[RMDB]
RNA sequence: GGGAACGACUCGAGUAGAGUCGAAAAGCGUACUACCACGUUUACACAGCUUGGAUUUAUAUCCUAAGACAGUAGUCCCAAAUAGGACUACAAUGACGGGAUAUUGUCAGCUGUGUUGACGUGGUAUCGCAAAUGAUCGCAGUUCGCUGCGAUCAAAUGACCAGUAAUCCUUCGGGAUUACUGGUCAAAAAGAAACAACAACAACAAC
Reactivity to 2A3 in 0.01 (KOAc 150mM, MgCl2 10mM, bicine 150mM(pH8.5), 24C), signal-to-noise 2, nucleotides 027 to 156: g040c020g080u130a170c060u010a000c020c000a010c000g000u010u000u010a000c000a000c050a000g000c010u120u150g140g000a000u090u300u020a040u080a000u040c000c000u020a160a070g150a070c020a070g010u000a000g000u010c010c000c000a180a240a060u210a070g000g000a000c010u000a000c040a060a140u160g020a050c060g030g010g000a010u000a000u000u010g000u000c000a000g000c000u000g000u000g000u000u000g000a000c010g000u010g000g000u020a000u010c000g000c000a000a000a110u020g000a000u000c000g000c010a000g000u030u120c140g140c190u000g000c000g000a000u000c000a010a000a000
Reactivity to DMS in 0.01 (KOAc 150mM, MgCl2 10mM, bicine 150mM(pH8.5), 24C), signal-to-noise 1, nucleotides 027 to 156: g000c040g030u000a050c120u000a010c010c000a000c000g000u000u000u000a040c000a020c030a000g000c010u020u010g030g020a040u000u000u010a020u000a010u010c000c000u000a060a270g020a200c080a150g000u010a010g020u000c000c000c030a010a170a120u000a090g050g010a050c000u000a020c010a070a130u010g000a180c300g010g010g000a030u000a000u000u000g000u000c010a070g030c020u010g010u010g030u020u000g000a000c010g010u000g000g010u010a000u000c010g010c000a030a040a130u010g020a020u000c000g010c010a020g020u000u000c300g030c010u000g000c000g020a020u000c000a000a010a060